[RMDB]
Record summary: This 177-nucleotide RNA was probed chemically with DMS and 2A3. The DMS profile rests on 4,595 reads. For 2A3 the reverse transcriptase was SuperScript II with manganese.
RNA sequence: GGGAACGACUCGAGUAGAGUCGAAAAGAUAUGGACCCACGGGACUUUUGACGAAGACAUUAUCGGAAACGAUAAUGCUUCGAUAAGUCCGUGGGUCCUAAGUCAAACAUCUCCUUCGGGAGAUGAACUCAAUGGUACUGUUCGCAGUACCAUUGAGAAAAGAAACAACAACAACAAC
Reactivity to DMS in 0.01 (KOAc 150mM, MgCl2 10mM, bicine 150mM(pH8.5), 24C), signal-to-noise 4, nucleotides 027 to 126: g020a030u000a300u010g000g000a020c000c000c000a000c010g030g050g010a030c010u000u010u000u000g020a300c210g000a020a000g010a150c000a010u000u000a010u000c000g010g010a140a130a150c010g010a000u000a000a000u000g000c000u000u000c000g000a090u000a000a010g000u000c000c010g010u000g000g010g010u000c000c000u000a010a080g020u000c020a130a120a290c030a010u000c000u000c000c000u000u000c260g030g010g000a010g010a000u000g000a060a190
Reactivity to 2A3 in 0.01 (KOAc 150mM, MgCl2 10mM, bicine 150mM(pH8.5), 24C), signal-to-noise 2, nucleotides 027 to 126: g020a010u070a040u110g000g000a010c000c030c000a010c020g100g110g100a100c040u270u190u250u300g230a180c080g000a000a000g030a080c000a000u000u000a010u010c010g040g000a060a050a030c010g000a010u010a000a000u010g000c010u010u000c010g000a000u010a030a000g000u000c020c000g010u000g000g000g000u000c000c000u000a000a000g000u000c000a020a020a000c000a010u010c010u020c000c000u040u100c260g170g000g000a020g000a010u020g000a040a020